[RMDB]
RNA sequence: GGGAACGACUCGAGUAGAGUCGAAAAGAUAUGGAUCGGAACUACGAUUUCCAGUUCGACGAAGAUAUGCCCUAUUCGGAAACGAAUAGGGCAUAUCAGAGAACGGAGGAUCGCCGAUCCUAAGUCACUUGUAUGUGAGGUUCGCCUCACAUACAAGAAAAGAAACAACAACAACAAC
Reactivity to DMS in 0.01 (KOAc 150mM, MgCl2 10mM, bicine 150mM(pH8.5), 24C), signal-to-noise 2, nucleotides 027 to 126: g020a030u000a300u000g000g010a000u000c000g020g010a170a080c190u020a300c050g000a010u020u000u010c000c010a170g020u010u000c000g000a180c300g000a130a180g040a020u000a000u000g000c000c000c010u000a020u000u000c000g050g000a120a120a240c000g010a030a000u000a010g010g010g020c000a000u010a000u010c000a050g050a190g020a020a000c010g000g000a040g000g000a000u000c020g000c000c000g000a000u000c000c000u000a000a060g000u010c010a180